The record gives the reactivity of an RNA of 177 nucleotides to 2A3 and DMS. For DMS the reverse transcriptase was MarathonRT. It was measured as part of the RMDB library OK1LIB. Values cover nucleotides 27 to 126. For 2A3, 737 sequencing reads were counted. For DMS, 1,107 sequencing reads were counted. 2A3 adducts were read by reverse transcription with SuperScript II with manganese. The RNA was probed in 150 mM KOAc, 10 mM MgCl2 and 150 mM bicine (pH 8.5) at 24 C.

RNA sequence: GGGAACGACUCGAGUAGAGUCGAAAAGCUAAGGAAGCACAUCUUCAAAUGAAAGCAGCGGCUCUCAGAAACUCUAAGACUAGGCUACUUGGUCUUGAUGGCAGUGUUAGUGGCAAGGAAGAGGACACCCCAUCACCGUAUUCGUACGGUGAUGGGGAAAAGAAACAACAACAACAAC
Reactivity to 2A3 in 0.01 (KOAc 150mM, MgCl2 10mM, bicine 150mM(pH8.5), 24C), signal-to-noise 2, nucleotides 027 to 126: g010c010u070a100a020g050g020a020a030g030c090a040c000a200u030c030u180u010c000a030a070a120u300g080a300a060a000g020c000a000g000c000g080g000c000u000c000u040c040a020g050a120a010a000c020u040c030u050a010a010g070a080c000u080a020g030g040c010u060a000c030u130u120g010g000u000c000u050u110g060a040u070g000g020c040a040g030u040g020u150u190a040g010u020g050g000c060a090a090g070g020a010a080g000a010g000g000a000c000a050
Reactivity to DMS in 0.01 (KOAc 150mM, MgCl2 10mM, bicine 150mM(pH8.5), 24C), signal-to-noise 1, nucleotides 027 to 126: g000c010u090a000a200g030g000a160a030g000c030a080c090a010u000c010u000u050c170a030a180a050u030g040a090a090a150g030c020a140g000c060g000g000c020u050c080u000c050a080g000a100a210a100c030u000c030u000a110a010g000a010c140u000a060g000g000c020u000a080c160u070u000g000g020u000c000u000u020g000a000u020g030g000c090a100g000u000g000u000u000a030g000u050g000g000c030a080a000g000g020a080a080g000a060g000g000a150c210a150